Chemical mapping of a 207-nucleotide RNA with 2A3 and DMS.
For 2A3, 7,366 sequencing reads were counted.
The DMS profile rests on 3,014 reads.
Reactivities are given for positions 27 through 156.
The reactions ran in a buffer of 150 mM KOAc, 10 mM MgCl2 and 150 mM bicine (pH 8.5), at 24 C.

RNA sequence: GGGAACGACUCGAGUAGAGUCGAAAACGGAACUAUGAAUUGAUGCAAGGUGUGGAGCGACCUUAAACAGUUCUGGUGGUGCUCUGAAUGGAGUGCUCUACUGAGAUUAUAAAAUAGAAGGUAAGCUGAAGGGGAAAUGAGUUCGCUCAUUUCCCAACUAUGGAAUUCUGUUCGCAGAAUUCCAUAGAAAAGAAACAACAACAACAAC
Reactivity to 2A3 in 0.01 (KOAc 150mM, MgCl2 10mM, bicine 150mM(pH8.5), 24C), signal-to-noise 7, nucleotides 027 to 156: c030g030g040a000a050c050u070a100u210g040a070a060u130u060g050a060u090g070c060a030a030g020g000u040g010u080g030g020a020g000c020g000a010c000c000u050u080a060a100a020c020a030g000u030u010c020u040g030g000u030g010g010u030g010c010u000c020u080g150a100a050u210g010g010a020g010u030g020c010u020c020u050a050c020u040g020a020g010a060u060u100a050u180a140a070a050a010u100a040g060a060a010g050g000u080a030a040g020c060u060g120a070a050g010g000g000g000a000a000a000u010g000a000g030u030u090c140g040c070u000c000a000u000u000u000c000c000c000a000a000
Reactivity to DMS in 0.01 (KOAc 150mM, MgCl2 10mM, bicine 150mM(pH8.5), 24C), signal-to-noise 2, nucleotides 027 to 156: c070g020g020a100a070c030u000a060u010g000a080a100u000u000g020a100u010g040c100a040a050g010g040u000g030u010g000g000a070g030c030g010a100c030c000u000u000a060a110a090c040a050g030u000u010c020u020g020g000u000g010g020u000g000c030u000c010u000g040a070a150u010g000g000a070g000u000g000c040u000c030u000a050c040u000g000a070g000a130u000u010a110u010a020a050a100a100u000a090g010a060a060g000g000u000a070a100g000c050u000g020a080a150g020g020g010g030a010a020a010u010g000a000g040u000u010c300g010c010u000c010a020u000u000u000c000c010c010a000a000